[RMDB]
RNA sequence: GGGAACGACUCGAGUAGAGUCGAAAAUGGAAAGGCUCUUCCUCUGUUUCUCUCAUGCAUCCCUACACCCCCAAUAUAUGCAGUGUCCUUGUUUUUGUUAAAUACAGAAGCUAUACAGAGGGCAGUUAGAGUUCAUCCACCGUUUUACUCAUUGGAACCUAGCAUAAUAGUUCGCUAUUAUGCUAGGAAAAGAAACAACAACAACAAC
Reactivity to 2A3 in 0.01 (KOAc 150mM, MgCl2 10mM, bicine 150mM(pH8.5), 24C), signal-to-noise 2, nucleotides 027 to 156: u110g010g030a040a030a020g000g020c030u020c010u080u070c000c010u000c000u000g020u030u170u030c110u020c010u020c040a080u080g020c010a050u010c000c020c060u110a100c230a240c090c060c030c000c040a060a040u080a000u010a000u040g030c010a020g020u000g010u040c000c050u060u060g000u020u010u010u060u000g020u070u080a090a080a080u070a030c000a000g010a030a000g000c010u040a020u000a160c010a000g030a000g010g000g000c010a000g000u040u050a000g000a000g010u020u170c030a030u000c010c000a000c010c020g000u000u030u050u080a090c030u010c030a070u150u230g040g040a000a020
Reactivity to DMS in 0.01 (KOAc 150mM, MgCl2 10mM, bicine 150mM(pH8.5), 24C), signal-to-noise 2, nucleotides 027 to 156: u020g010g000a090a140a180g030g000c020u000c010u000u000c030c020u010c030u010g000u010u000u010c040u000c000u030c010a120u000g020c050a080u000c030c010c020u010a160c110a300c050c000c000c020c040a120a110u000a130u010a050u010g030c040a100g020u010g020u010c000c070u010u010g020u000u010u000u000u000g010u010u010a090a080a160u010a150c090a050g010a050a030g010c000u000a060u000a100c050a140g010a060g040g020g030c050a080g010u000u000a060g000a080g020u000u020c020a140u010c020c030a060c010c030g010u000u000u000u000a090c060u000c050a220u010u000g000g010a120a220